[RMDB]
RNA sequence: GGGAACGACUCGAGUAGAGUCGAAAAUCGGCCAGGCGGACCGUCAAUCCUUUGGCGCCGGCAUGGACCGCGGCGCGGUACAGCCGUGCGCAACGGACCGAAGCGUCGCGGGUGUCCGCGGCGUACCAGGAGAAGGUAGAUUCGUCUACCUUCUCCUAAAAGAAACAACAACAACAAC
Reactivity to DMS in 0.01 (KOAc 150mM, MgCl2 10mM, bicine 150mM(pH8.5), 24C), signal-to-noise 3, nucleotides 027 to 126: u010c000g000g000c020c010a120g000g010c100g010g000a070c050c020g020u010c140a090a180u000c060c030u030u020u020g000g020c020g020c020c010g000g000c030a110u010g000g000a030c000c000g010c020g000g020c180g000c000g020g000u010a020c070a030g000c000c010g010u050g020c030g000c020a050a040c080g000g000a150c050c030g010a100a130g000c000g000u000c010g040c000g000g000g040u040g020u070c010c000g000c000g000g000c000g000u000a020c090c070
Reactivity to 2A3 in 0.01 (KOAc 150mM, MgCl2 10mM, bicine 150mM(pH8.5), 24C), signal-to-noise 7, nucleotides 027 to 126: u070c000g030g030c020c010a040g090g060c030g000g050a070c050c010g050u080c050a030a110u090c020c020u100u080u180g110g010c000g000c000c000g010g000c070a260u080g010g010a010c000c010g000c020g150g100c170g010c010g010g000u050a040c000a010g000c000c040g130u220g020c020g000c020a010a010c030g000g010a030c020c020g050a090a030g000c010g000u010c010g000c010g000g000g050u250g110u040c000c000g000c000g000g000c000g010u010a040c010c030